[RMDB]
RNA sequence: GGGAACGACUCGAGUAGAGUCGAAAACUCUUACUGUUCGCAGUAAGAGAAUGGGAUUCGAAUCCCUCGCUAACCGCGGGUAAGCGGCCCAAAAAUAAAAUAGAGAGGCGUGCUUCGGCACGCCUAAGCAUAACGAAUAUUUCGAUAUUCGUUAUGCAAAAGAAACAACAACAACAAC
Reactivity to 2A3 in 0.01 (KOAc 150mM, MgCl2 10mM, bicine 150mM(pH8.5), 24C), signal-to-noise 3, nucleotides 027 to 126: c000u010c000u000u010a000c000u010g030u050u070c230g020c090a000g000u010a010a010g010a010g010a010a020u040g000g020g000a050u210u210c080g020a120a110u020c010c010c020u020c020g020c010u020a060a070c010c020g080c140g190g100g070u040a080a000g020c000g030g020c020c010c010a040a060a000a000a000u150a030a060a010a030u190a010g200a000g020a010g080g010c010g020u000g010c010u050u120c260g080g000c010a000c020g000c000c000u000a010a010
Reactivity to DMS in 0.01 (KOAc 150mM, MgCl2 10mM, bicine 150mM(pH8.5), 24C), signal-to-noise 3, nucleotides 027 to 126: c000u000c000u000u000a020c000u000g000u000u020c190g020c000a010g010u010a000a020g000a010g000a040a050u000g010g010g000a040u000u020c210g010a130a240u000c000c000c010u000c030g020c020u000a070a070c040c020g020c220g010g010g040u000a080a040g020c010g000g000c000c010c000a010a040a060a090a090u030a060a050a060a090u000a160g000a170g000a030g020g010c000g020u000g010c000u000u020c210g030g010c010a000c000g020c000c000u000a000a030